[RMDB]
RNA sequence: GGGAACGACUCGAGUAGAGUCGAAAAAUAAAGCGUAAUCGCAUCCCAGUAGCAAAGAGCAGCGUAAAGGCGAAAGCCGAACUCAACAUCGCAUCGGGCUAAGAUGCGAUCGUAGCCACGCAAAAAACAAAUCAACACCGUUCGCGGUGUUGAUUUGAAAAGAAACAACAACAACAAC
Reactivity to 2A3 in 0.01 (KOAc 150mM, MgCl2 10mM, bicine 150mM(pH8.5), 24C), signal-to-noise 1, nucleotides 027 to 126: a010u160a030a080a010g000c010g020u060a110a110u200c080g010c030a000u000c000c000c000a020g130u090a040g000c070a010a170a030g050a060g040c110a030g000c050g130u100a110a130a040g010g000c020g040a030a000a030g000c000c000g000a040a020c030u020c030a040a030c000a010u000c000g000c000a000u010c030g030g170g030c030u090a100a020g000a010u000g000c010g000a010u010c040g010u010a010g040c090c010a040c020g000c130a130a000a000a000a000a000
Reactivity to DMS in 0.01 (KOAc 150mM, MgCl2 10mM, bicine 150mM(pH8.5), 24C), signal-to-noise 1, nucleotides 027 to 126: a040u010a070a070a040g010c000g030u020a100a070u030c040g000c000a150u010c010c000c030a090g000u010a120g000c060a120a050a050g000a050g010c040a130g000c030g030u010a050a060a100g010g010c010g000a110a130a200g030c000c010g020a130a070c010u000c030a100a030c080a030u000c000g010c000a000u000c020g020g030g020c200u000a070a190g000a030u000g010c000g010a000u000c060g000u000a010g030c140c090a020c080g000c040a010a060a060a020a010a100
Source: RMDB library M2PK90, as collected in RNAgym. Structure probing data (2A3 and DMS) for a 177-nucleotide construct. The RNA was probed in 150 mM KOAc, 10 mM MgCl2 and 150 mM bicine (pH 8.5) at 24 C. As a SHAPE reagent, 2A3 marks flexible, mostly unpaired nucleotides at the ribose 2'-OH.